[RMDB]
RNA sequence: GGGAACGACUCGAGUAGAGUCGAAAACCCGCCCUCUCCGGGGAAUCGUGAACCGGGGGUUCCGACCGGGCCCACAAUGGGAUGAUGACCUUUUGCUUUACUGAACACAUGAUGACCACGCCCUUCGGGUUAAACGUGAUUUCGAUCACGUUUAACCAAAAGAAACAACAACAACAAC
Reactivity to 2A3 in 0.01 (KOAc 150mM, MgCl2 10mM, bicine 150mM(pH8.5), 24C), signal-to-noise 5, nucleotides 027 to 126: c000c000c000g010c010c000c000u030c020u000c010c010g000g000g030g080a030a090u130c070g070u060g110a070a040c030c000g050g000g000g020g000u050u070c010c000g020a050c020c030g000g040g000c000c010c000a080c040a020a120u150g010g030g020a010u070g020a040u060g070a080c010c000u040u070u060u080g060c020u090u080u080a070c040u060g090a110a010c030a000c000a070u070g020a040u050g020a070c000c000a010c020g040c000c000c000u060u070c040g030
Reactivity to DMS in 0.01 (KOAc 150mM, MgCl2 10mM, bicine 150mM(pH8.5), 24C), signal-to-noise 2, nucleotides 027 to 126: c000c010c010g030c010c020c000u000c010u020c010c030g010g000g010g000a100a070u020c150g020u020g020a180a120c050c010g010g020g010g000g010u000u000c020c020g020a070c090c020g000g010g000c070c070c010a080c120a080a070u010g000g000g000a050u030g000a060u010g000a050c040c020u000u010u000u010g010c050u010u000u000a060c040u000g000a080a060c090a080c120a080u000g010a050u010g000a110c050c010a050c070g010c000c010c000u000u000c110g010